Chemical mapping of a 207-nucleotide RNA with DMS and 2A3. Reactivities are given for positions 27 through 156. 2A3 adducts were read by reverse transcription with SuperScript II with manganese.
RNA sequence: GGGAACGACUCGAGUAGAGUCGAAAAGACGCCUUUAGAAGAAGAGGCUAGGGGGUAUUACGGUGUGGGAUACUUAGUAAUAUGCAACGCUAAUUGCAUAAGAUUGUAGGACGGAAUUUACAGUCUUUAGAGAUAAGCACGUUCGCGUGCUUAUCAACACCGGCAUAAAGUUCGCUUUAUGCCGGUGAAAAGAAACAACAACAACAAC
Reactivity to DMS in 0.01 (KOAc 150mM, MgCl2 10mM, bicine 150mM(pH8.5), 24C), signal-to-noise 2, nucleotides 027 to 156: g020a160c130g070c000c000u000u010u000a130g010a180a280g000a070a100g000a030g030g020c020u000a140g000g000g000g000g040u000a090u000u000a050c050g020g030u000g020u020g030g000g000a100u010a090c080u000u010a140g010u000a080a070u000a050u000g000c030a030a070c050g020c070u000a040a110u000u000g020c010a050u000a050a040g000a040u000u000g000u000a040g010g000a190c030g010g030a070a300u000u000u010a030c030a050g010u000c010u000u000u000a140g000a170g000a020u000a010a010g040c000a000c000g010u000u000c300g030c080g020u010g010c010u000u000a000u000c000a000a110
Reactivity to 2A3 in 0.01 (KOAc 150mM, MgCl2 10mM, bicine 150mM(pH8.5), 24C), signal-to-noise 6, nucleotides 027 to 156: g050a020c060g010c000c020u050u030u050a170g040a250a010g010a040a010g010a030g030g020c040u050a060g020g020g000g020g030u120a100u120u160a050c050g020g030u180g030u150g140g010g000a010u040a090c030u040u040a060g020u040a050a090u030a050u110g000c010a020a020c050g020c130u100a090a090u050u020g000c010a010u010a060a020g010a020u020u060g010u020a020g020g060a030c090g040g040a050a040u100u080u010a040c010a000g010u000c000u050u050u090a110g030a000g000a030u000a000a000g010c000a000c010g020u040u050c130g010c010g070u000g000c000u000u010a000u000c000a000a000